Source: RMDB library VIROID, as collected in RNAgym.
An RNA of 207 nucleotides, treated with 2A3 and read out base by base.
The reactions ran in a buffer of 150 mM KOAc, 10 mM MgCl2 and 150 mM bicine (pH 8.5), at 24 C.
[RMDB]
RNA sequence: GGGAACGACUCGAGUAGAGUCGAAAACUUUUCCUUCGGGGAACCAAGCGGGUUGGUUCCGAGGGGGGUGUGAUCCAGGUACCGCCGUAGAAACUGGAUUACGACGUCUACCCGGGAUUCAAACCCGGUCCCCUCCAGAAGUGAUUCUGGAAGAAGAGUAUGGUGUAUGGUUCGCCAUACACCAUACAAAAGAAACAACAACAACAAC
Reactivity to 2A3 in 0.01 (KOAc 150mM, MgCl2 10mM, bicine 150mM(pH8.5), 24C), signal-to-noise 1, nucleotides 027 to 156: c020u140u110u120u100c000c040u030u050c030g090g000g000g010a050a050c050c010a040a030g210c090g000g140g000u110u080g050g000u010u000c010c010g000a100g000g010g000g000g000g030u050g010u000g000a000u000c000c000a000g040g000u010a040c030c010g100c000c000g090u150a020g060a090a270a040c000u000g000g000a000u010u000a030c020g010a020c020g200u060c000u090a190c000c000c000g000g010g000a150u300u300c150a100a100a110c000c000c000g000g070u020c000c000c000c000u000c000c000a000g000a010a000g010u000g100a110u070u000c010u020g030g010a030a030g110a140a000g090a050